This 207-nucleotide RNA was probed chemically with DMS and 2A3. 2A3 adducts were read by reverse transcription with SuperScript II with manganese. DMS adducts were read by reverse transcription with MarathonRT. Conditions: 150 mM KOAc, 10 mM MgCl2 and 150 mM bicine (pH 8.5), 24 C. Reactivities are rounded to 0.1 and cut off at 0 and 3.
[RMDB]
RNA sequence: GGGAACGACUCGAGUAGAGUCGAAAAUCAGAUAAACAAGGAAUAAUUUCCUAGCUUAAAUGCGUCUUAUAUAUUACAUGGAACAUAUUACAUAGGACAUGUUACUCAAUCUGGCAACCCUAUAGAAAAAGAAUUCACUUGAGUGAUGAGAAGAGUCCUAUGACAUGCACUUCGGUGCAUGUCAUAGAAAAGAAACAACAACAACAAC
Reactivity to DMS in 0.01 (KOAc 150mM, MgCl2 10mM, bicine 150mM(pH8.5), 24C), signal-to-noise 1, nucleotides 027 to 156: u000c030a070g000a050u000a060a010a080c010a080a080g050g000a070a080u000a140a150u000u010u000c000c000u020a130g010c070u010u000a000a110a100u000g020c090g000u000c000u000u030a060u000a030u000a030u000u000a060c000a220u000g040g040a130a300c070a190u000a000u000u000a000c070a050u010a000g000g000a030c020a050u000g020u000u000a030c050u000c000a130a060u010c010u000g020g060c030a070a110c010c020c000u000a250u000a150g020a050a020a110a070a160g000a070a140u000u010c010a030c040u000u000g010a040g000u000g000a000u000g010a160g020a050a130g010a150g000u000c060
Reactivity to 2A3 in 0.01 (KOAc 150mM, MgCl2 10mM, bicine 150mM(pH8.5), 24C), signal-to-noise 3, nucleotides 027 to 156: u040c010a000g040a040u110a080a120a010c070a030a090g020g040a050a060u170a200a130u090u070u030c010c010u000a010g010c010u080u130a050a060a080u160g010c010g010u010c010u080u050a050u000a040u030a020u060u210a090c090a130u090g080g000a070a010c010a040u180a040u040u150a070c040a070u030a050g000g050a000c000a050u080g020u040u070a060c050u040c130a040a090u020c030u020g010g010c020a050a030c010c000c040u120a100u090a170g120a010a050a000a020a010g100a050a030u130u050c020a040c050u080u140g030a050g100u030g010a040u040g020a030g050a150a050g010a030g050u030c000